Background:
The record gives the reactivity of an RNA of 207 nucleotides to 2A3.
RNA sequence: GGGAACGACUCGAGUAGAGUCGAAAAGCCAGCUAGCCGGCAAAAAAGCAAACUUGACCACCAAGGAUAAAAGAGAUCUUAUCCAAGGAUGCAAAAGAUAAUCUCACUUUUGACACCCACUGAUCUCAAAACGUGCGGUUCUUCGGAACCGCACGAACUUCUGUAGACUGUUCGCAGUCUACAGAAGAAAAGAAACAACAACAACAAC
Reactivity to 2A3 in 0.01 (KOAc 150mM, MgCl2 10mM, bicine 150mM(pH8.5), 24C), signal-to-noise 2, nucleotides 027 to 156: g030c000c000a000g020c050u030a050g050c000c070g070g030c150a090a080a020a000a000a090g160c140a110a090a060c070u070u070g050a060c050c000a020c050c000a110a050g040g000a050u030a040a040a030a040g010a000g000a000u000c010u040u060a020u020c050c050a030a020g000g020a020u050g000c010a000a020a030a010g020a060u140a230a150u160c070u070c050a030c030u040u020u020u040g110a100c010a030c040c000c020a070c100u070g020a030u010c000u000c000a060a050a000a010c010g000u020g010c040g010g020u030u020c030u060u070c110g080g020a010a000c000c010g020c000a000c000g000a010a010
Values cover nucleotides 27 to 156. For 2A3, 1,139 sequencing reads were counted. The RNA was probed in 150 mM KOAc, 10 mM MgCl2 and 150 mM bicine (pH 8.5) at 24 C. 2A3 adducts were read by reverse transcription with SuperScript II with manganese.